[RMDB]
RNA sequence: GGGAACGACUCGAGUAGAGUCGAAAACCGCCCGCGUUCGAUCCCUGCGGGCACUCCGUCCCCCCGGCGAUGGGCUCCGUGACUGGGCGAGCAGACACGGCGCGCAGGCCGAUUUUCCGCCCCGGGCGACCAGAGUCGGUUUCGACCGACUCUGGUCAAAAGAAACAACAACAACAAC
Reactivity to 2A3 in 0.01 (KOAc 150mM, MgCl2 10mM, bicine 150mM(pH8.5), 24C), signal-to-noise 1, nucleotides 027 to 126: c010c010g020c000c000c000g030c030g050u050u080c090g090a150u060c020c000c050u050g040c000g010g020g000c000a020c000u020c000c040g050u000c010c000c010c000c010c010g010g000c070g120a190u040g010g000g010c020u000c040c000g030u020g050a050c020u020g000g040g100c100g070a050g060c020a000g000a000c000a000c010g000g000c020g000c030g000c020a000g030g050c010c020g010a000u080u010u040u000c020c000g040c000c010c010c020g000g060g000c050
Chemical mapping of a 177-nucleotide RNA with 2A3.
The 2A3 profile rests on 1,011 reads.
The reactions ran in a buffer of 150 mM KOAc, 10 mM MgCl2 and 150 mM bicine (pH 8.5), at 24 C.
Source: RMDB library RFM100, as collected in RNAgym.
Values cover nucleotides 27 to 126.